The record gives the reactivity of an RNA of 207 nucleotides to DMS and 2A3. Values cover nucleotides 27 to 156. It was measured as part of the RMDB library OK3TST. Conditions: 150 mM KOAc, 10 mM MgCl2 and 150 mM bicine (pH 8.5), 24 C.

RNA sequence: GGGAACGACUCGAGUAGAGUCGAAAAUUUAUGCUCUAACCACCAAUUAUAGUUUCGAUUUGAUGGGGGACCAAUUCCUCUUGGCGGUAGGCUUCCUUCAAUUUUUGGGGUCUGUAAAUUUGGGAAAAAACUUAAGAAGCGGGUUAUCCUCAAGGCACAUUACGUGUGCAUUCGUGCACACGUAAUGAAAAGAAACAACAACAACAAC
Reactivity to DMS in 0.01 (KOAc 150mM, MgCl2 10mM, bicine 150mM(pH8.5), 24C), signal-to-noise 1, nucleotides 027 to 156: u000u020u000a050u010g000c030u010c060u000a120a100c000c010a090c020c020a050a040u000u000a090u010a100g020u000u000u000c000g000a090u000u000u000g010a050u000g030g000g000g030g100a070c050c080a030a240u000u010c010c010u010c070u010u000g000g040c040g030g040u010a070g010g020c040u000u020c020c020u020u000c100a070a150u000u000u000u000u000g020g030g050g000u000c050u000g010u000a040a020a110u000u000u000g000g000g010a010a050a040a070a080a060c030u020u000a030a090g000a170a090g040c020g010g030g050u000u000a150u020c010c020u000c020a040a060g020g070c040a140
Reactivity to 2A3 in 0.01 (KOAc 150mM, MgCl2 10mM, bicine 150mM(pH8.5), 24C), signal-to-noise 2, nucleotides 027 to 156: u090u090u070a120u110g030c000u000c010u060a060a060c000c000a010c010c020a060a080u070u130a060u120a180g040u040u050u120c040g040a070u020u020u220g070a070u120g000g000g000g000g060a020c000c020a030a040u100u030c000c000u040c020u000u070g080g000c050g020g010u010a000g000g020c000u060u050c000c000u050u120c020a150a150u090u100u060u130u140g020g000g010g010u000c010u040g060u080a050a090a120u070u050u080g020g000g000a000a030a090a020a010a060c060u070u050a100a000g050a100a000g130c030g080g000g000u020u030a050u020c000c000u030c060a040a050g040g010c020a010